[RMDB]
RNA sequence: GGGAACGACUCGAGUAGAGUCGAAAACUGUGUCCGGAUCUCCUGGAGGAGACGCUCCACGCGUGAGGGAUCCAGAUCCUCGUCCGGAAGCCGGGAAGGCAGGUGCAGGAGGAGGGGCUUCUCCUCCGCUGUGGAAGUAGUUCGCUACUUCCACAGCAAAAGAAACAACAACAACAAC
Reactivity to 2A3 in 0.01 (KOAc 150mM, MgCl2 10mM, bicine 150mM(pH8.5), 24C), signal-to-noise 3, nucleotides 027 to 126: c030u040g030u040g030u150c000c010g030g000a020u020c010u030c010c050u150g170g140a180g040g000a020g040a000c010g030c010u160c120c100a120c120g010c020g030u030g010a060g020g030g030a040u070c080c020a050g010a110u060c000c000u010c000g040u000c000c010g000g020a000a000g000c010c010g060g010g090a100a070g070g000c030a020g020g110u140g040c060a040g010g030a020g000g020a020g030g050g040g020c020u150u040c000u040c000c000u000c010c010
Reactivity to DMS in 0.01 (KOAc 150mM, MgCl2 10mM, bicine 150mM(pH8.5), 24C), signal-to-noise 4, nucleotides 027 to 126: c050u000g000u010g010u000c000c000g010g010a030u000c010u010c020c010u010g010g020a210g020g000a030g000a040c030g000c010u000c130c180a120c240g020c030g020u000g010a050g010g010g000a080u010c170c200a120g000a120u010c010c000u000c020g000u000c000c000g000g000a060a090g010c020c010g000g000g000a130a100g000g000c030a070g010g010u000g020c090a120g000g010a040g000g000a030g020g020g000g010c160u020u010c010u000c000c000u000c020c010
An RNA of 177 nucleotides, treated with 2A3 and DMS and read out base by base. The reactions ran in a buffer of 150 mM KOAc, 10 mM MgCl2 and 150 mM bicine (pH 8.5), at 24 C. For DMS the reverse transcriptase was MarathonRT.